[RMDB]
RNA sequence: GGGAACGACUCGAGUAGAGUCGAAAAAGGAUCUCCACCAGGUCCGGCAGUUUGUGUAACGUGGGUAACUCAUCACAGAAAAACCACACACGACGGUUACGGUUUUCUCCCAUUGCCAGCAGCCCACACGUAGGGAAAAAUUCGUUUUUCCCUACGUAAAAGAAACAACAACAACAAC
Reactivity to 2A3 in 0.01 (KOAc 150mM, MgCl2 10mM, bicine 150mM(pH8.5), 24C), signal-to-noise 5, nucleotides 027 to 126: a000g040g010a030u020c030u060c070c020a070c020c030a010g020g020u020c020c000g020g020c020a040g010u080u260u260g040u030g020u060a130a070c100g010u030g020g020g020u050a050a020c020u030c070a090u100c060a090c030a080g110a030a090a010a020a020c000c000a010c000a010c000a010c040g100a010c020g040g000u080u050a030c020g010g020u050u030u060u030c030u030c000c010c010a030u020u080g010c010c010a010g000c020a020g020c030c000c000a030c000
Reactivity to DMS in 0.01 (KOAc 150mM, MgCl2 10mM, bicine 150mM(pH8.5), 24C), signal-to-noise 8, nucleotides 027 to 126: a100g020g010a050u000c030u010c070c070a110c080c070a130g000g000u010c020c020g010g010c060a070g010u000u000u010g020u000g010u000a090a090c180g020u000g000g000g000u010a090a140c090u000c050a060u010c160a090c200a110g000a040a040a040a080a100c020c010a050c050a080c050a040c050g010a030c090g010g010u000u000a060c120g010g000u000u000u000u000c080u000c010c010c010a110u000u000g010c020c020a060g000c060a100g010c010c010c020a060c190